This 177-nucleotide RNA was probed chemically with DMS and 2A3.
For DMS the reverse transcriptase was MarathonRT.
The RNA was probed in 150 mM KOAc, 10 mM MgCl2 and 150 mM bicine (pH 8.5) at 24 C.
It was measured as part of the RMDB library TTRDES.
The DMS profile rests on 1,527 reads.
For 2A3, 3,125 sequencing reads were counted.

RNA sequence: GGGAACGACUCGAGUAGAGUCGAAAAGAUAUGGAUCUCACCAUGAAGGCAACAGCUGGCUUCGGAAACGAAGCCAGACAUGCCUUAUGGGAGAUCCUAAGUCAAAACGCGCAGUUCGCUGCGCGAAGAUGUAACUCACCUUCGGGUGAGUUACAUCAAAAGAAACAACAACAACAAC
Reactivity to DMS in 0.01 (KOAc 150mM, MgCl2 10mM, bicine 150mM(pH8.5), 24C), signal-to-noise 2, nucleotides 027 to 126: g000a090u020a300u020g010g000a000u000c000u000c020a190c000c010a010u000g030a030a020g030g040c010a110a080c300a180g000c000u000g000g010c000u000u000c000g000g000a100a080a240c000g010a000a010g000c000c010a000g000a020c110a180u000g030c000c000u000u000a030u000g000g010g000a000g000a000u000c000c000u000a000a120g000u020c060a100a060a150a200c020g020c010g000c010a010g010u000u000c300g020c030u000g000c000g010c000g000a030a120
Reactivity to 2A3 in 0.01 (KOAc 150mM, MgCl2 10mM, bicine 150mM(pH8.5), 24C), signal-to-noise 1, nucleotides 027 to 126: g020a030u080a050u160g010g000a020u000c010u010c000a300c210c010a020u180g300a040a040g020g000c030a020a020c060a260g000c010u000g000g000c000u000u010c010g030g050a050a060a020c040g000a000a000g000c000c020a000g010a020c000a010u040g010c000c000u010u000a030u020g020g000g010a000g010a000u000c000c000u020a010a010g050u000c040a010a020a060a110c030g000c000g000c010a010g000u070u090c190g080c190u000g000c000g000c000g000a000a010